The data come from the RNA Mapping Database (RMDB), library OK2TST. This 177-nucleotide RNA was probed chemically with 2A3 and DMS.
[RMDB]
RNA sequence: GGGAACGACUCGAGUAGAGUCGAAAAUACAAUCACCGUAGAUUAACAGAAUUAUGUUCUGUUUUUUUGCUCGCGUAACCGGCAGGACGAACUCCUGCUGCUAGUGGCUGACGUUUUGGUGAUUUUAAUUGCGCAGUAUUUUCGAAUACUGCGCAAUAAAAGAAACAACAACAACAAC
Reactivity to 2A3 in 0.01 (KOAc 150mM, MgCl2 10mM, bicine 150mM(pH8.5), 24C), signal-to-noise 1, nucleotides 027 to 126: u120a000c030a010a020u000c000a010c010c000g040u020a030g000a040u000u040a020a000c010a020g030a020a020u140u160a140u300g060u030u010c000u020g000u000u010u010u010u020u040u080g040c050u070c070g060c020g010u040a010a040c040c000g010g020c000a000g000g050a010c050g030a060a060c040u000c000c000u010g000c000u000g010c020u070a050g050u050g130g110c070u070g050a040c010g020u050u020u140u120g000g000u000g000a000u020u020u020u030a040
Reactivity to DMS in 0.01 (KOAc 150mM, MgCl2 10mM, bicine 150mM(pH8.5), 24C), signal-to-noise 3, nucleotides 027 to 126: u020a090c200a060a030u000c000a010c010c010g020u000a060g000a030u000u000a020a010c000a010g010a020a040u000u000a130u010g020u000u000c000u000g000u000u010u000u000u010u000u000g010c030u000c130g020c010g010u000a080a050c220c020g000g000c010a030g000g000a030c110g000a180a300c090u000c000c010u000g000c000u000g010c090u000a100g020u000g020g010c060u000g010a080c060g010u000u000u010u010g020g000u010g010a020u000u000u000u000a030
The reactions ran in a buffer of 150 mM KOAc, 10 mM MgCl2 and 150 mM bicine (pH 8.5), at 24 C. The 2A3 profile rests on 1,258 reads. For DMS, 2,648 sequencing reads were counted.